Overview:
Chemical mapping of a 177-nucleotide RNA with 2A3. 2A3 adducts were read by reverse transcription with SuperScript II with manganese. High 2A3 reactivity points to a flexible backbone, as in loops and unpaired stretches.
[RMDB]
RNA sequence: GGGAACGACUCGAGUAGAGUCGAAAAACACCACAACAUGUCAAAGCAAGCCCUUUGCGACUUCCUGAGGAACUCCCCUCAUCCAAGUGUCGGCAUCCUCAUUCACCACAUGGGUCGAUUCCAUAACCAGCCGACUGGGAUUCGUCCCAGUCGGCUGAAAAGAAACAACAACAACAAC
Reactivity to 2A3 in 0.01 (KOAc 150mM, MgCl2 10mM, bicine 150mM(pH8.5), 24C), signal-to-noise 1, nucleotides 027 to 126: a000c020a050c030c000a110c020a030a030c010a140u240g040u300c020a000a000a120g000c000a010a040g030c000c020c000u000u070u040g030c070g000a070c000u100u030c070c000u090g000a040g020g020a010a000c010u010c000c000c000c000u010c000a080u060c100c050a010a020g050u000g040u050c000g000g000c000a020u030c000c010u000c000a060u080u110c030a070c010c010a040c010a120u100g030g000g000u000c000g100a240u000u060c000c000a040u000a140a040c000
Source: RMDB library OK1LIB, as collected in RNAgym. Conditions: 150 mM KOAc, 10 mM MgCl2 and 150 mM bicine (pH 8.5), 24 C. For 2A3, 492 sequencing reads were counted.